[RMDB]
RNA sequence: GGGAACGACUCGAGUAGAGUCGAAAAACUGUGUAUGCAGCCUCACAGCUAAGUGGAUGCCAUGGUGAAAUGUUUAGAUCAUAGGCCUUUGAGAAGAAUUAUCAGAAUGUUAGAGGAAUGGGCCUCCAUUCGUCCUACAAUUCGUUGUAGGACGAAUAAAAGAAACAACAACAACAAC
Reactivity to 2A3 in 0.01 (KOAc 150mM, MgCl2 10mM, bicine 150mM(pH8.5), 24C), signal-to-noise 3, nucleotides 027 to 126: a000c030u040g010u020g030u060a060u190g050c020a000g030c000c000u010c000a070c000a050g060c060u090a120a010g060u030g020g010a020u040g030c020c000a060u060g050g020u070g030a050a100a070u160g030u070u120u070a100g010a090u080c020a060u090a080g000g000c000c010u080u050u110g060a070g040a110a050g030a080a110u140u060a050u140c040a010g130a190a050u090g020u080u090a070g010a010g090g030a080a040u050g020g020g020c000c020u010c000c010
Reactivity to DMS in 0.01 (KOAc 150mM, MgCl2 10mM, bicine 150mM(pH8.5), 24C), signal-to-noise 5, nucleotides 027 to 126: a100c030u000g000u000g010u010a060u010g020c040a040g000c040c040u010c050a060c060a080g010c080u000a070a080g040u000g000g010a060u000g000c040c030a040u000g020g010u010g000a080a090a060u010g010u010u000u000a090g010a100u000c050a060u000a070g010g000c040c040u000u000u010g010a110g010a100a100g010a090a070u010u010a070u000c070a110g000a080a060u010g000u000u010a090g010a070g010g010a100a060u000g010g010g010c030c040u000c080c080